RNA sequence: GGGAACGACUCGAGUAGAGUCGAAAAGAUUUAAACAGAUCGAGAUACACAAAUGUUUGAAUCCCAGUAACAAAAAUCCUGGUAUCUCGGGUAUACAGUAGUGCAGAUACUGUAUUUUUAAUGCUCCUUAGGUUUUCCAUCUUCGGAUGGAAAACAACGUGUAUUAUAUCUUCGGAUAUAAUACACGAAAAGAAACAACAACAACAAC
Reactivity to DMS in 0.01 (KOAc 150mM, MgCl2 10mM, bicine 150mM(pH8.5), 24C), signal-to-noise 2, nucleotides 027 to 156: g010a090u000u000u000a030a040a050c010a200g010a070u000c050g010a030g000a090u000a000c020a190c080a070a080a090u000g020u000u000u010g000a080a060u000c000c010c040a230g030u000a110a270c060a000a060a060a100a090u000c090c060u000g050g030u000a000u000c000u000c000g040g000g050u000a030u000a000c000a000g040u010a000g010u000g040c110a250g000a120u000a000c000u000g010u000a000u000u000u040u030u000a060a180u000g010c020u010c000c000u010u000a130g030g000u000u000u000u000c020c000a010u020c020u000u000c300g070g020a030u000g010g010a000a010a000a010c000a040a100
Reactivity to 2A3 in 0.01 (KOAc 150mM, MgCl2 10mM, bicine 150mM(pH8.5), 24C), signal-to-noise 5, nucleotides 027 to 156: g010a000u040u050u090a060a040a020c030a030g110a090u120c010g010a000g000a020u030a020c050a000c030a130a230a120u100g020u030u030u030g040a050a040u030c020c020c030a040g120u120a120a080c060a090a120a020a010a040u050c020c030u030g020g000u010a010u000c000u000c000g010g030g000u020a010u000a010c000a000g020u030a000g040u050g290c070a020g060a180u010a020c000u000g010u000a010u010u030u000u020u100a120a130u080g030c030u100c070c000u080u090a060g070g060u010u000u000u000c000c000a010u010c000u040u050c200g070g000a000u000g010g000a000a000a000a000c000a000a000